About this RNA
Structure probing data (DMS) for a 207-nucleotide construct. Values are in units of 0.01, from 0 to 300, in steps of 10. The RNA was probed in 150 mM KOAc, 10 mM MgCl2 and 150 mM bicine (pH 8.5) at 24 C. The DMS profile rests on 5,524 reads.

RNA sequence: GGGAACGACUCGAGUAGAGUCGAAAAGGGGUCUACUUUGUCAGGGUCAUGGUCUUCUUGGAUUUAUAGGCUGAAGCCUCCACGGCCUAUUGUCAGAAGGAGAGUGACCCUUGGAUUUAAGUAGACGGAGGCACCCAAAGACCGGUUCGCCGGUCAAGAAGUAUACAAAGUUCGCUUUGUAUACUUCAAAAGAAACAACAACAACAAC
Reactivity to DMS in 0.01 (KOAc 150mM, MgCl2 10mM, bicine 150mM(pH8.5), 24C), signal-to-noise 2, nucleotides 027 to 156: g000g020g040g010u000c000u000a010c000u000u000u010g000u000c030a060g020g010g010u000c010a040u020g030g000u000c010u010u010c010u010u000g010g010a080u000u000u000a050u010a040g030g000c000u000g010a070a110g030c050c010u000c010c030a300c060g010g000c010c000u020a000u000u000g010u000c020a100g010a070a050g010g020a020g010a110g000u000g000a040c030c010c030u000u010g010g000a050u010u000u000a020a040g030u000a000g020a060c010g070g010a030g030g020c030a050c010c010c010a070a100a120g010a030c000c010g000g020u000u000c290g020c020c020g020g000u000c000a010a140